Source information:
This 207-nucleotide RNA was probed chemically with DMS and 2A3. The data come from the RNA Mapping Database (RMDB), library M2RFPK.
RNA sequence: GGGAACGACUCGAGUAGAGUCGAAAAAUACUUCUCAGGAUGGCGCGUUGCAGUCCAACAAGAUCCAGGGACUGUACAGAAUUUUCCUAUACCUCGAGUCGGGGUUGGAAUCUAAGGUUGACUCGCUAAAACUUUACGUGGUUCGCCACGUAAAGAACAAUCCACUUCUGUUCGCAGAAGUGGAUUGAAAAGAAACAACAACAACAAC
Reactivity to DMS in 0.01 (KOAc 150mM, MgCl2 10mM, bicine 150mM(pH8.5), 24C), signal-to-noise 1, nucleotides 027 to 156: a050u000a020c040u010u000c020u000c060a140g020g010a120u010g000g040c070g030c120g030u010u000g030c000a050g000u000c020c000a060a170c040a150a270g010a070u000c050c050a200g020g020g020a030c040u000g000u000a130c110a100g000a100a050u010u000u000u000c000c000u000a120u000a040c080c000u020c030g010a080g030u000c060g050g000g000g000u010u020g010g020a060a100u020c040u010a070a070g000g030u000u020g010a090c020u000c040g000c020u000a080a070a110a100c010u010u000u000a000c000g010u000g000g010u000u000c300g010c000c000a030c020g020u000a010a000a000g000a040a110
Reactivity to 2A3 in 0.01 (KOAc 150mM, MgCl2 10mM, bicine 150mM(pH8.5), 24C), signal-to-noise 3, nucleotides 027 to 156: a000u120a050c020u060u000c020u010c050a060g140g030a090u130g070g030c060g020c060g070u100u070g020c020a000g000u000c030c010a060a050c060a090a170g090a190u030c080c080a080g010g000g010a000c000u000g010u000a000c030a040g140a100a050u050u060u050u090c000c000u020a030u120a160c010c010u050c040g050a060g150u130c090g060g000g010g000u020u040g050g000a030a040u000c040u120a100a060g090g010u060u070g040a040c020u040c010g000c020u020a020a020a040a170c000u020u000u000a010c000g000u000g000g060u050u040c150g050c010c000a000c000g000u010a000a000a000g010a010a000
For 2A3 the reverse transcriptase was SuperScript II with manganese.